RNA sequence: GGGAACGACUCGAGUAGAGUCGAAAAGGGGUCGCAGUGAGGGCUAUGCAGGUAACUACCCACCUCGGCUGUAAAUCUACCUGAAGCCUCCACGGGUAGAUUUACAGCCGAGAGGUUACCUUCCCAUAGCCUACCCACCACUGCGACGGAGGCACCCGUUUAUAUGAAAGUUCGCUUUCAUAUAAACAAAAGAAACAACAACAACAAC
Reactivity to DMS in 0.01 (KOAc 150mM, MgCl2 10mM, bicine 150mM(pH8.5), 24C), signal-to-noise 2, nucleotides 027 to 156: g010g030g050g020u010c010g010c020a050g010u020g000a100g000g000g030c000u010a010u000g000c050a000g010g010u000a010a050c010u000a030c030c020c060a300c080c010u000c000g040g000c000u010g040u000a000a030a010u000c010u000a000c020c010u000g010a020a120g010c010c000u000c000c030a150c030g000g000g000u000a020g020a070u000u010u010a010c000a030g030c030c000g010a010g010a010g010g000u010u000a010c010c000u000u000c060c080c000a070u000a010g000c010c010u000a010c010c000c000a300c020c000a020c020u000g000c000g030a010c010g000g000a000g090g030c020a190c030c060c020

Conditions: 150 mM KOAc, 10 mM MgCl2 and 150 mM bicine (pH 8.5), 24 C. Chemical mapping of a 207-nucleotide RNA with DMS. Values are in units of 0.01, from 0 to 300, in steps of 10. Reactivities are given for positions 27 through 156.